[RMDB]
RNA sequence: GGGAACGACUCGAGUAGAGUCGAAAAGAUAUGGACCGAUAGGACAUGAACCCGGAUCGGAAACGAUCCGUGAGUUCAACAGCCUAUACGGUCCUAAGUCAAACGGUAGUGGUUCGCCACUACCGAAGCUUUAACGUGAGUUCGCUCACGUUAAAGCAAAAGAAACAACAACAACAAC
Reactivity to 2A3 in 0.01 (KOAc 150mM, MgCl2 10mM, bicine 150mM(pH8.5), 24C), signal-to-noise 2, nucleotides 027 to 126: g000a000u010a000u060g000g000a000c000c020g010a000u000a010g030g000a000c300a300u300g010a010a010c000c010c000g000g040a010u000c000g000g000a020a000a000c000g000a000u000c000c000g010u030g020a110g000u000u020c010a040a030c060a050g000c000c010u030a020u100a110c000g000g030u000c000c000u010a000a000g000u010c020a030a030a100c010g000g000u000a010g000u000g060g110u060u070c300g070c050c000a000c010u010a000c000c000g010a020a020
Reactivity to DMS in 0.01 (KOAc 150mM, MgCl2 10mM, bicine 150mM(pH8.5), 24C), signal-to-noise 2, nucleotides 027 to 126: g010a010u000a010u000g000g000a020c000c000g000a050u000a000g020g020a010c050a300u020g020a000a000c000c010c000g010g000a020u000c020g000g010a010a010a010c010g040a010u000c000c000g010u000g000a110g030u000u000c000a110a090c260a170g010c000c000u000a010u000a140c000g030g010u000c000c000u000a000a040g000u000c020a130a090a290c040g040g010u000a000g030u010g010g040u000u020c250g010c010c000a000c000u000a010c000c000g000a010a040